Chemical mapping of a 207-nucleotide RNA with DMS and 2A3. The reactions ran in a buffer of 150 mM KOAc, 10 mM MgCl2 and 150 mM bicine (pH 8.5), at 24 C.
RNA sequence: GGGAACGACUCGAGUAGAGUCGAAAAUUGAUAACUUGUUGUGUAACUUCAUUUAAAUGAAUUGAAACAAAUUUAAUACAAGUGGAUGUAGGAUAACCGUCCGUCCUUUACAUUGGUAUAAAAGUGAACGACACAGACCUCUUCGGAGGUCUGUGAAGAGACGUUAUAUGUUCGCAUAUAACGUCUCAAAAGAAACAACAACAACAAC
Reactivity to DMS in 0.01 (KOAc 150mM, MgCl2 10mM, bicine 150mM(pH8.5), 24C), signal-to-noise 1, nucleotides 027 to 156: u000u000g030a180u010a070a060c100u000u010g010u030u030g020u000g010u020a070a050c080u000u000c030a050u000u000u000a090a110a130u000g000a050a070u000u010g010a200a210a140c030a040a130a140u000u010u000a060a130u000a060c020a010a050g000u000g020g020a140u000g030u000a060g020g030a000u010a070a160c040c070g020u000c010c020g000u000c000c000u010u010u000a020c000a120u000u010g070g000u000a020u000a040a050a040a120g060u000g000a050a050c030g050a300c010a020c030a000g030a030c000c000u000c000u000u010c260g030g000a050g030g010u000c010u020g050u000g000a020a100
Reactivity to 2A3 in 0.01 (KOAc 150mM, MgCl2 10mM, bicine 150mM(pH8.5), 24C), signal-to-noise 2, nucleotides 027 to 156: u120u120g000a040u070a170a000c000u020u060g000u010u020g020u010g060u080a040a070c030u000u000c010a060u070u140u290a180a210a120u070g040a010a010u140u010g010a050a060a000c070a050a240a000u120u190u170a120a030u130a090c020a100a060g040u070g030g040a040u010g060u130a020g000g020a010u020a100a020c010c030g010u030c020c010g020u030c000c000u070u060u070a060c070a130u040u160g090g000u130a090u020a150a110a010a010g030u010g050a000a000c020g080a000c000a000c000a000g000a000c000c000u040c040u020u090c200g080g000a000g000g000u010c000u000g000u000g010a000a000